[RMDB]
RNA sequence: GGGAACGACUCGAGUAGAGUCGAAAAACGGUACCAUGUGACCAUGUCUACUAGUCGAUGUGCGAUCUACUCUACAUGUGCAUCCAUGGUGACGAUCACAUGGAUCCCAUGGAUCCGUACUAUGCUAGUGUCUGGCAGUUUUCGAACUGCCAGACACAAAAGAAACAACAACAACAAC
Reactivity to DMS in 0.01 (KOAc 150mM, MgCl2 10mM, bicine 150mM(pH8.5), 24C), signal-to-noise 2, nucleotides 027 to 126: a030c060g000g010u050a210c000c020a010u010g000u010g010a070c020c050a100u110g030u000c040u010a040c030u010a050g010u010c100g010a040u030g020u000g000c010g020a200u020c080u000a050c060u000c060u020a100c180a060u030g000u000g010c050a030u020c000c010a140u010g000g000u000g000a090c030g010a120u010c090a030c020a000u010g000g010a050u000c020c040c010a160u000g030g000a140u000c030c040g000u000a100c160u010a080u000g040c130u000a060
Reactivity to 2A3 in 0.01 (KOAc 150mM, MgCl2 10mM, bicine 150mM(pH8.5), 24C), signal-to-noise 3, nucleotides 027 to 126: a000c030g010g000u020a070c010c010a000u010g010u000g030a060c070c050a100u100g010u030c060u110a110c050u050a060g110u100c050g030a030u020g010u030g060c070g110a080u020c020u130a080c050u030c000u130a120c070a190u240g010u000g020c020a000u000c010c000a050u110g010g000u050g020a020c040g020a050u170c010a000c000a010u020g010g010a050u000c000c000c000a000u030g160g040a070u020c020c000g010u000a000c060u110a080u120g160c060u110a060